[RMDB]
RNA sequence: GGGAACGACUCGAGUAGAGUCGAAAAACAUUUAUCAUUUCUUUUGUGCCCAAAGACUGCUGAAUGAAGGUUAGGAUUACUGACCAUAACACAUUUUGGCAUGCACCUCAAUUACUUCCUUAUAACACGCAUACGCUCGAUUCGUCGAGCGUAUGCGAAAAGAAACAACAACAACAAC
Reactivity to 2A3 in 0.01 (KOAc 150mM, MgCl2 10mM, bicine 150mM(pH8.5), 24C), signal-to-noise 2, nucleotides 027 to 126: a000c110a060u190u060u190a210u130c080a090u030u230u050c000u000u200u000u100g030u060g020c000c030c050a030a110a000g100a000c000u090g060c000u000g000a000a000u040g020a150a030g000g000u000u000a020g000g170a290u110u070a120c040u130g000a000c000c000a100u030a050a000c000a070c070a080u000u000u000u180g050g000c000a000u060g010c000a020c000c000u020c050a000a000u000u070a160c000u110u000c000c000u000u300a000u040a120a100c070a000
Annotation
This 177-nucleotide RNA was probed chemically with 2A3. The 2A3 profile rests on 537 reads. Source: RMDB library OK1LIB, as collected in RNAgym. Conditions: 150 mM KOAc, 10 mM MgCl2 and 150 mM bicine (pH 8.5), 24 C.